[RMDB]
Source information
Structure probing data (DMS and 2A3) for a 177-nucleotide construct. DMS adducts were read by reverse transcription with MarathonRT. The DMS profile rests on 1,916 reads. The reactions ran in a buffer of 150 mM KOAc, 10 mM MgCl2 and 150 mM bicine (pH 8.5), at 24 C.

RNA sequence: GGGAACGACUCGAGUAGAGUCGAAAACUGAGUUCCUCGCUCUCUUCAAUCAGGCUAUUGACGACAUGGCUGUCAGUGGCAUGCAGAAUAUGCUGUCAGCCACAUGCAGGAACGGGUACCUUAACGGCCUUCCGUCUAGUUUCGACUAGACGGAAGGAAAAGAAACAACAACAACAAC
Reactivity to DMS in 0.01 (KOAc 150mM, MgCl2 10mM, bicine 150mM(pH8.5), 24C), signal-to-noise 3, nucleotides 027 to 126: c040u000g010a130g020u000u000c000c000u000c150g000c020u000c090u020c030u000u000c050a020a060u010c090a110g010g010c200u000a040u000u000g020a030c060g000a030c280a110u000g000g020c000u000g020u000c000a060g030u000g000g020c060a060u000g000c100a110g000a130a070u000a020u000g020c040u000g000u000c020a040g000c000c020a070c190a050u010g020c000a020g000g010a020a030c040g000g010g020u010a110c040c050u020u020a060a140c250g010g000
Reactivity to 2A3 in 0.01 (KOAc 150mM, MgCl2 10mM, bicine 150mM(pH8.5), 24C), signal-to-noise 3, nucleotides 027 to 126: c020u040g070a010g100u000u000c020c000u020c080g020c010u040c000u010c000u120u060c030a030a070u040c040a090g230g000c060u090a030u060u070g020a050c040g010a000c050a100u080g020g030c010u000g030u020c000a020g010u080g070g040c050a060u100g000c020a030g040a300a110u120a060u300g010c020u010g030u030c030a010g000c030c010a030c000a020u160g040c000a000g010g040a000a010c020g000g070g000u070a090c020c000u040u110a100a040c060g160g030